Conditions: 150 mM KOAc, 10 mM MgCl2 and 150 mM bicine (pH 8.5), 24 C. Chemical mapping of a 177-nucleotide RNA with DMS and 2A3. The 2A3 profile rests on 1,477 reads. Values cover nucleotides 27 to 126. It was measured as part of the RMDB libraries RFM100 and RFMREP. For DMS the reverse transcriptase was MarathonRT. For 2A3 the reverse transcriptase was SuperScript II with manganese.
[RMDB]
RNA sequence: GGGAACGACUCGAGUAGAGUCGAAAAGGAAUCCCCACCGCAAUUGCUUCGCGCAAUGGGGAACGCCGAGAAUUGAAACAUCUUAGUAUCGGCAGGAAGAGAAAACGUAACCGUGAUGUCGUUAGUACAGCAUAUGGGAGUUCGCUCCCAUAUGCUGAAAAGAAACAACAACAACAAC
Reactivity to DMS in 0.01 (KOAc 150mM, MgCl2 10mM, bicine 150mM(pH8.5), 24C), signal-to-noise 3, nucleotides 027 to 126: g000g010a170a170u010c030c010c000c020a070c050c000g000c150a110a050u000u010g030c140u000u000c160g000c070g040c030a020a020u000g030g000g000g010a070a200c150g000c000c010g000a010g000a160a140u010u010g000a030a060a120c230a060u010c030u000u010a050g000u000a080u000c050g020g000c010a110g010g030a070a100g000a130g010a090a030a090a070c090g000u000a110a140c060c030g000u010g000a100u020g000u000c070g000u000u000a110g000u050a110
Reactivity to 2A3 in 0.01 (KOAc 150mM, MgCl2 10mM, bicine 150mM(pH8.5), 24C), signal-to-noise 3, nucleotides 027 to 126: g060g000a040a120u020c010c030c010c010a130c280c040g020c050a040a060u140u180g110c050u130u210c130g000c010g010c010a050a000u010g000g000g000g020a010a000c010g030c010c000g020a020g010a040a060u110u110g060a190a100a090c070a110u050c020u050u040a020g000u000a040u020c000g010g000c040a020g130g020a100a070g110a000g010a100a050a010a000c030g020u060a000a050c030c000g080u050g030a120u070g020u030c020g020u080u000a010g010u050a040